[RMDB]
RNA sequence: GGGAACGACUCGAGUAGAGUCGAAAAGAAGGUAUUCAAUGCGAAAGAGAGGGCGCUAAUGAGCGACUUUGCGUUCCGUUCGCUUGUAUCACUCUCAUGUAGACGUAAUGUUGCGGCUACCUGCACGUGCAGGUAUCGGAUUCGUCCGAUACCUGCAAAAAGAAACAACAACAACAAC
Reactivity to 2A3 in 0.01 (KOAc 150mM, MgCl2 10mM, bicine 150mM(pH8.5), 24C), signal-to-noise 1, nucleotides 027 to 126: g070a100a040g080g000u050a050u050u140c070a030a020u240g000c010g000a000a030a010g300a070g060a110g010g040g000c070g030c050u120a040a040u150g080a080g170c130g090a090c110u070u060u070g000c020g000u090u000c000c000g010u010u010c010g010c000u020u010g000u000a010u040c060a000c100u020c010u000c020a020u050g000u020a000g000a000c010g010u010a000a300u300g160u300u080g060c010g000g000c020u000a000c010c040u050g010c060a070c060g060
Reactivity to DMS in 0.01 (KOAc 150mM, MgCl2 10mM, bicine 150mM(pH8.5), 24C), signal-to-noise 3, nucleotides 027 to 126: g000a080a070g010g010u010a040u000u010c060a040a050u010g020c020g030a040a040a050g010a190g020a110g020g000g000c020g010c030u010a040a090u000g000a200g020c160g010a100c130u010u000u020g030c010g010u000u000c020c010g010u000u000c000g010c010u000u000g010u000a030u000c080a040c030u000c010u010c020a050u000g030u010a010g000a020c020g020u010a070a130u020g010u010u000g000c010g000g000c010u000a020c010c110u000g030c110a090c270g000
The record gives the reactivity of an RNA of 177 nucleotides to 2A3 and DMS. In probing experiments dimethyl sulfate is read out at A N1 and C N3, which are open when not base-paired. DMS adducts were read by reverse transcription with MarathonRT. 2A3 adducts were read by reverse transcription with SuperScript II with manganese. Values cover nucleotides 27 to 126. Source: RMDB library OK2TST, as collected in RNAgym.